Source: RMDB library OK2TST, as collected in RNAgym. The record gives the reactivity of an RNA of 177 nucleotides to DMS and 2A3. 2A3 is a SHAPE reagent: it acylates the 2'-hydroxyl of flexible nucleotides of all four kinds. For 2A3, 939 sequencing reads were counted. DMS adducts were read by reverse transcription with MarathonRT. The RNA was probed in 150 mM KOAc, 10 mM MgCl2 and 150 mM bicine (pH 8.5) at 24 C.

[RMDB]
RNA sequence: GGGAACGACUCGAGUAGAGUCGAAAAAUAUCACUGGUACGCGCUAAUAGCUCCAGUGGAUGACCGUCGCUGACUUUGCCGGGUGAAAUCACCCGAUACAACCAGCCGCAGUAGCCGGUUUGCUGCACUUUUGACCCGUAUUCGUACGGGUCAAAAGAAAAGAAACAACAACAACAAC
Reactivity to DMS in 0.01 (KOAc 150mM, MgCl2 10mM, bicine 150mM(pH8.5), 24C), signal-to-noise 1, nucleotides 027 to 126: a030u000a030u000c020a030c010u000g000g030u010a050c200g070c000g010c210u030a140a130u020a270g010c020u000c010c020a020g020u020g020g010a070u000g000a140c000c000g030u010c150g040c010u000g000a060c050u030u010u010g020c080c010g000g060g020u010g000a080a120a150u020c010a000c000c010c000g000a020u010a020c090a010a100c190c010a070g000c030c240g020c060a170g010u000a110g000c090c000g000g010u000u020u020g010c010u000g010c040a230
Reactivity to 2A3 in 0.01 (KOAc 150mM, MgCl2 10mM, bicine 150mM(pH8.5), 24C), signal-to-noise 2, nucleotides 027 to 126: a000u110a000u040c000a010c010u030g010g000u230a100c120g060c010g050c200u200a080a100u160a300g020c020u040c010c000a010g020u000g010g040a020u060g020a000c030c000g080u100c050g000c020u020g040a080c030u030u120u100g060c080c040g030g120g000u040g090a280a250a000u300c010a010c010c000c010g000a010u010a060c010a000a090c020c000a010g000c000c050g000c010a040g020u020a020g010c060c070g130g000u000u020u180g000c020u010g020c060a050